[RMDB]
RNA sequence: GGGAACGACUCGAGUAGAGUCGAAAAUUUUGUGCUUACGCCUGGCCCAUGAGCUCCUGGUUAAUCUGCUUCUUUCCUAUACUCUUGAAGUGGGUUACCCUUCACCCUCUUACUAUGCUUUGGGUGCCUCUGUCGUGUCAUUCGUGACACGACAGAGAAAAGAAACAACAACAACAAC
Reactivity to 2A3 in 0.01 (KOAc 150mM, MgCl2 10mM, bicine 150mM(pH8.5), 24C), signal-to-noise 5, nucleotides 027 to 126: u110u130u050u060g110u080g040c030u120u090a010c040g020c020c030u070g040g030c030c020c010a070u100g020a010g040c010u020c010c050u040g000g010u020u030a010a000u000c020u010g020c010u020u000c010u060u130u080c030c010u170a150u100a260c080u200c050u100u140g030a030a020g000u030g010g000g010u000u030a060c010c000c000u060u090c010a020c000c010c000u030c010u040u050a070c030u070a110u190g070c030u070u070u030g010g000g000u030g010c000
Reactivity to DMS in 0.01 (KOAc 150mM, MgCl2 10mM, bicine 150mM(pH8.5), 24C), signal-to-noise 1, nucleotides 027 to 126: u010u010u000u000g010u010g010c010u020u010a170c130g000c070c030u010g020g000c010c000c000a040u000g000a050g010c070u000c100c030u000g000g030u060u000a100a020u000c020u000g000c000u000u000c010u000u030u000c040c040u000a090u060a090c080u000c060u000u010g000a000a060g000u010g000g010g020u000u000a020c000c000c010u000u000c110a000c020c000c000u000c110u000u010a110c110u040a060u090g000c150u000u000u030g000g000g030u000g000c190